[RMDB]
The record gives the reactivity of an RNA of 177 nucleotides to 2A3.
Reactivities are given for positions 27 through 126.
The RNA was probed in 150 mM KOAc, 10 mM MgCl2 and 150 mM bicine (pH 8.5) at 24 C.
RNA sequence: GGGAACGACUCGAGUAGAGUCGAAAAACUUUAUGAUUAUGGCUGAUCAUGGUACUGAUUGGCAUAUUUACGAUAACAAAUUUACUAUGGUUCAUAAGCGUAAUAGUCAUAUUUUUGAUUUAGGAUCUCCAGCAUGAUGGUUCGCCAUCAUGCUGGAAAAAGAAACAACAACAACAAC
Reactivity to 2A3 in 0.01 (KOAc 150mM, MgCl2 10mM, bicine 150mM(pH8.5), 24C), signal-to-noise 2, nucleotides 027 to 126: a040c000u000u000u000a030u000g000a000u130u000a000u020g030g000c000u020g000a000u000c000a000u000g050g000u030a060c020u030g160a300u180u040g000g120c140a000u030a030u110u090u100a100c160g080a040u100a150a030c010a110a040a040u020u040u000a000c000u000a000u000g000g000u070u050c030a140u100a260a020g000c030g040u140a050a000u000a000g010u000c000a010u000a040u030u110u000u100u070g160a220u000u040u040a060g020g130a020u000c000